RNA sequence: GGGAACGACUCGAGUAGAGUCGAAAAGACGCCUGUGUGGCGAAGCGAGUAUGAGAAAGCGCCGCAAAUUAAACAGUCCAUCUAGCGGCAAGAUGGAUUGCUCGCAAAAAGAUCCAUAUCACAGAGAAGUAAUGCUCAUCUUCGGAUGAGCAUUACUAAAAGAAACAACAACAACAAC
Reactivity to 2A3 in 0.01 (KOAc 150mM, MgCl2 10mM, bicine 150mM(pH8.5), 24C), signal-to-noise 2, nucleotides 027 to 126: g030a000c010g060c010c000u050g000u020g050u060g050g000c010g020a020a000g000c000g000a000g040u030a040u120g160a080g180a230a140a040g150c110g000c040c000g000c000a050a110a100u160u150a060a100a000c030a020g030u010c000c000a000u000c000u000a110g010c000g020g000c020a000a000g010a000u000g000g000a000u000u050g010c020u020c000g000c000a170a010a000a000a000g030a030u000c020c000a040u050a070u240c030a030c050a060g060a000g050a110
Reactivity to DMS in 0.01 (KOAc 150mM, MgCl2 10mM, bicine 150mM(pH8.5), 24C), signal-to-noise 2, nucleotides 027 to 126: g050a120c130g020c030c000u010g050u000g020u020g050g000c090g000a070a150g020c060g000a020g020u050a080u020g000a180g060a070a020a180g000c000g050c020c020g000c130a070a090a190u040u020a000a150a090c050a190g000u000c000c010a030u000c060u030a140g010c000g040g020c000a110a040g000a020u000g010g010a170u000u010g000c000u010c060g020c040a010a020a130a050a090g000a040u000c000c010a080u020a000u080c130a100c060a100g010a060g050a120
Record summary
This 177-nucleotide RNA was probed chemically with 2A3 and DMS. For DMS, 1,400 sequencing reads were counted. Reactivities are given for positions 27 through 126.